[RMDB]
This 177-nucleotide RNA was probed chemically with DMS and 2A3.
The RNA was probed in 150 mM KOAc, 10 mM MgCl2 and 150 mM bicine (pH 8.5) at 24 C.
For 2A3 the reverse transcriptase was SuperScript II with manganese.
Values cover nucleotides 27 to 126.
RNA sequence: GGGAACGACUCGAGUAGAGUCGAAAAGCGUAUCGCGCGAUAAUACGCCGCUAUUAUCGCUAUGCGGCGCGCCGCGCGUAUCGCCGCAUAAUAGCGUAUUAUGCGUAUCGCCGCAUAAUAUAUGCGCCAUCCAAAUACGAUUCGUCGUAUUUGGAUGAAAAGAAACAACAACAACAAC
Reactivity to DMS in 0.01 (KOAc 150mM, MgCl2 10mM, bicine 150mM(pH8.5), 24C), signal-to-noise 9, nucleotides 027 to 126: g010c010g010u010a150u010c040g010c020g020c000g010a090u000a100a080u000a090c010g010c030c040g010c040u000a110u000u010a040u000c140g020c130u000a070u000g010c010g010g000c000g020c140g020c130c040g020c030g020c010g010u000a060u010c020g010c020c070g000c090a050u000a070a090u010a110g010c090g010u000a030u000u000a000u000g000c000g010u000a100u010c180g010c240c010g010c010a010u000a020a020u000a050u000a070u010g020c010g000c140
Reactivity to 2A3 in 0.01 (KOAc 150mM, MgCl2 10mM, bicine 150mM(pH8.5), 24C), signal-to-noise 9, nucleotides 027 to 126: g010c010g010u070a050u230c020g000c000g010c010g050a020u110a160a090u130a110c040g020c060c020g000c060u030a060u150u080a130u200c080g000c120u020a030u110g000c000g000g000c000g000c020g010c020c030g030c000g000c010g010u010a040u110c010g000c040c010g000c010a070u140a140a090u090a120g080c040g020u030a010u010u010a000u020g000c010g020u040a240u280c120g090c170c010g000c010a000u020a030a020u040a020u020a030u110g000c000g000c020